The data come from the RNA Mapping Database (RMDB), library OK2TRN. Structure probing data (DMS) for a 177-nucleotide construct. Values cover nucleotides 27 to 126. DMS adducts were read by reverse transcription with MarathonRT.

RNA sequence: GGGAACGACUCGAGUAGAGUCGAAAAAAGCUGUUGACGGAGAAGCUGCAGAACCGGGACCUGGAGGCGCGGCCGGGCAUGACCAUGAUGGAGUCCUUUGAGCAGCAGGUGAACCAGGUGCUCAACAGGGCUCCUUCAUUUUCGAAUGAAGGAGCCCAAAAGAAACAACAACAACAAC
Reactivity to DMS in 0.01 (KOAc 150mM, MgCl2 10mM, bicine 150mM(pH8.5), 24C), signal-to-noise 2, nucleotides 027 to 126: a090a050g000c040u000g020u010u010g020a090c090g000g000a080g000a110a100g000c070u000g030c100a090g010a070a120c060c050g000g010g010a060c050c040u000g020g010a100g010g010c070g050c030g000g000c040c050g000g000g000c080a050u000g000a060c060c040a030u000g010a100u000g010g000a050g020u000c010c040u000u000u000g000a040g010c040a020g010c030a060g010g020u020g000a100a150c050c010a100g010g010u000g000c030u000c030a020a060c290a040